[RMDB]
RNA sequence: GGGAACGACUCGAGUAGAGUCGAAAAUUUGGCCUUUUGUGACCGGCGGCUUUGCCCUUCCAGCUCUUGCAGACGAAGCUGGCUACUACUUCUUCAACGGCAACUACAAGGUGGACAGCCCCAAGAAUCCAUAGCAACCUUUCGAGGUUGCUAUGGAAAAAGAAACAACAACAACAAC
Reactivity to DMS in 0.01 (KOAc 150mM, MgCl2 10mM, bicine 150mM(pH8.5), 24C), signal-to-noise 2, nucleotides 027 to 126: u010u000u010g040g000c030c010u000u010u000u000g030u000g030a070c040c040g000g050c120g000g000c090u000u000u000g000c030c000c030u010u000c050c010a110g020c050u000c070u000u000g040c110a080g000a100c130g000a110a070g020c040u020g010g030c170u010a050c080u020a090c110u000u000c040u000u000c080a080a120c050g020g030c040a030a110c090u010a030c080a090a060g000g000u000g000g000a070c070a070g010c050c020c010c060a120a090g010a110a110
The record gives the reactivity of an RNA of 177 nucleotides to DMS.
The DMS profile rests on 1,190 reads.
It was measured as part of the RMDB library OK2TRN.
The reactions ran in a buffer of 150 mM KOAc, 10 mM MgCl2 and 150 mM bicine (pH 8.5), at 24 C.
Reactivities are rounded to 0.1 and cut off at 0 and 3.